[RMDB]
RNA sequence: GGGAACGACUCGAGUAGAGUCGAAAAUUUUCACCGACUUAAGGCUGCCAGAGCACCUGCACUUUUUAAAUCCGGGAAAGUGGUCUCUACAAAUUAACGACCAGAAAUUAGAGAUUCAGUUCACUUAACCGUUAUUGAACAUUUACUACGAGCCAAAAGUAUAGUACGUAUUCGUACGUACUAUACUAAAAGAAACAACAACAACAAC
Reactivity to 2A3 in 0.01 (KOAc 150mM, MgCl2 10mM, bicine 150mM(pH8.5), 24C), signal-to-noise 5, nucleotides 027 to 156: u060u040u040u070c100a090c030c010g080a060c020u090u090a070a020g030g000c010u010g020c030c020a050g020a030g040c030a050c020c030u030g040c050a090c080u110u080u060u050u180a080a120a090u040c040c010g040g000g020a070a000a050g020u030g020g000u020c000u000c000u010a070c070a050a140a080u190u110a150a100c090g060a050c060c060a050g100a020a100a020u070u040a030g000a000g000a010u100u100c090a040g150u100u130c000a010c020u050u030a110a020c000c020g060u040u050a070u030u070g020a060a010c030a060u050u110u120a030c040u050a050c020g020a000g030c030c000a060a090a000
Reactivity to DMS in 0.01 (KOAc 150mM, MgCl2 10mM, bicine 150mM(pH8.5), 24C), signal-to-noise 3, nucleotides 027 to 156: u000u000u010u010c020a280c020c030g040a100c050u000u000a060a080g020g020c040u000g010c020c050a140g020a190g010c030a080c030c020u010g010c020a070c030u010u020u000u000u030a040a110a180u000c120c070g030g030g000a080a050a080g050u000g000g000u000c010u000c020u010a170c060a080a080a080u000u020a050a110c040g010a080c030c050a150g000a050a070a090u000u000a050g000a270g000a070u000u000c040a130g000u000u000c020a040c040u000u000a060a150c060c050g010u000u010a090u000u000g000a050a080c040a130u000u000u000a050c030u000a070c030g010a050g000c030c030a080a090a090